[RMDB]
An RNA of 177 nucleotides, treated with DMS and 2A3 and read out base by base. For 2A3 the reverse transcriptase was SuperScript II with manganese. The data come from the RNA Mapping Database (RMDB), library OK1LIB. The 2A3 profile rests on 497 reads. For DMS the reverse transcriptase was MarathonRT. For DMS, 1,853 sequencing reads were counted.
RNA sequence: GGGAACGACUCGAGUAGAGUCGAAAAUUACAAAUUGUUGCAGAUUCAAAUGACAGUGUUAAACGUGAAAAGGGUAAAAGAGGCUUAGAUAUUUUAAAUGAAUUGUAUGAUUUAGAUUAUCCUACAACCUGGAGGAAAGAUUCGUCUUUCCUCCAGGAAAAGAAACAACAACAACAAC
Reactivity to DMS in 0.01 (KOAc 150mM, MgCl2 10mM, bicine 150mM(pH8.5), 24C), signal-to-noise 2, nucleotides 027 to 126: u030u070a280c180a110a090a140u010u020g000u000u010g020c090a070g020a110u000u020c030a080a090a160u000g020a010c040a070g000u040g000u000u000a020a140a050c150g000u000g000a050a020a110a080g000g000g060u020a050a050a080a030g000a000g000g000c060u000u010a040g000a040u040a020u000u020u010u000a000a050a060u010g000a050a060u010u000g000u030a100u010g000a030u000u020u000a040g000a070u010u000a050u000c020c100u020a020c190a060a050
Reactivity to 2A3 in 0.01 (KOAc 150mM, MgCl2 10mM, bicine 150mM(pH8.5), 24C), signal-to-noise 1, nucleotides 027 to 126: u070u030a120c090a000a000a050u090u130g010u010u050g030c070a050g000a160u070u010c000a040a000a200u070g000a000c050a080g000u020g070u110u120a210a100a000c000g140u040g300a130a000a000a000g090g030g000u110a100a080a000a090g000a000g040g020c030u050u080a030g020a000u040a000u080u140u140u240a030a050a050u000g060a030a030u050u000g000u090a000u130g000a000u000u000u000a000g000a030u200u030a050u190c000c000u000a000c000a000a190